[RMDB]
RNA sequence: GGGAACGACUCGAGUAGAGUCGAAAAAUGGCGGUAUUUCAUUCUGUCGUAGGCAUAAUUGGAAUUGUGUGGAUUGUGACACUGCAGGUGUGGGGAAUACCUUCAUCUGUGAAGAAGUCGCAAAUGAGAACACCCACGUUCGCGUGGGUGAAAAGAAACAACAACAACAAC
Reactivity to DMS in 0.01 (KOAc 150mM, MgCl2 10mM, bicine 150mM(pH8.5), 24C), signal-to-noise 4, nucleotides 027 to 129: a120u060g030g050c050g070g000u020a140u020u070u010c070a000u040u010c060u010g080u030c060g020u010a090g020g020c040a040u000a000a000u000u050g030g000a130a120u020u060g040u000g010u030g000g000a190u060u000g030u050g020a020c080a140c080u050g030c000a030g020g050u000g000u010g040g000g050g010a250a040u000a090c000c010u030u000c030a010u010c020u050g040u010g030a080a070g020a140a130g040u000c020g010c030a030a000a080u030g100a000g010a010a020
Reactivity to 2A3 in 0.01 (KOAc 150mM, MgCl2 10mM, bicine 150mM(pH8.5), 24C), signal-to-noise 3, nucleotides 027 to 129: a000u120g010g010c010g000g040u050a040u030u050u010c010a040u000u060c030u000g080u090c040g090u030a040g000g050c010a000u000a040a010u130u080g130g020a070a050u070u070g020u020g030u060g050g050a100u050u000g000u000g000a000c000a000c050u010g040c000a000g000g000u000g000u020g030g000g040g050a070a100u160a160c000c000u000u000c010a000u010c000u000g020u000g060a100a090g030a140a040g010u020c000g000c000a000a020a030u230g050a050g060a060a010